[RMDB]
RNA sequence: GGGAACGACUCGAGUAGAGUCGAAAACCAUUCCUUAUACCUUGAGUAUUGCUGAAUUCAGUUUAGCGUGCAUGCUCUUGGCUAUUCUCAUAGUGAUUGUGAAAUUUGGAGUUACUUAUUCGUCAAUAAAACACUACCACGUUCGCGUGGUAGUGAACACAUAGAAUAGGUUCGCCUAUUCUAUGUGAAAAGAAACAACAACAACAAC
Reactivity to DMS in 0.01 (KOAc 150mM, MgCl2 10mM, bicine 150mM(pH8.5), 24C), signal-to-noise 3, nucleotides 027 to 156: c030c030a200u000u010c010c020u010u000a200u000a030c000c010u010u000g010a050g030u000a030u000u010g000c000u010g000a070a100u000u000c150a210g010u000u010u010a080g050c060g000u000g030c090a160u000g000c010u000c000u020u000g020g030c050u010a070u000u000c050u000c020a120u000a120g000u010g010a100u000u000g040u000g020a050a050a160u000u000u000g010g010a130g010u010u010a090c100u010u010a100u010u000c070g000u000c050a030a100u000a040a080a110a150c010a030c010u010a020c000c000a000c000g020u000u000c300g050c050g020u010g000g020u000a000g010u010g010a010a090
Reactivity to 2A3 in 0.01 (KOAc 150mM, MgCl2 10mM, bicine 150mM(pH8.5), 24C), signal-to-noise 9, nucleotides 027 to 156: c020c000a020u030u070c020c010u110u120a050u040a130c000c000u020u010g010a010g010u020a070u160u140g000c020u040g050a150a130u200u190c100a190g150u060u090u160a050g020c060g010u060g020c010a010u020g000c000u000c000u010u000g000g000c000u030a040u100u060c060u000c040a080u070a100g120u090g160a180u120u120g020u030g070a060a080a110u120u070u080g030g010a050g060u090u070a100c060u100u120a090u220u190c070g110u080c100a100a090u120a160a090a020a020c000a000c000u000a000c000c000a010c000g020u020u030c130g030c000g090u000g000g000u000a000g000u000g000a000a000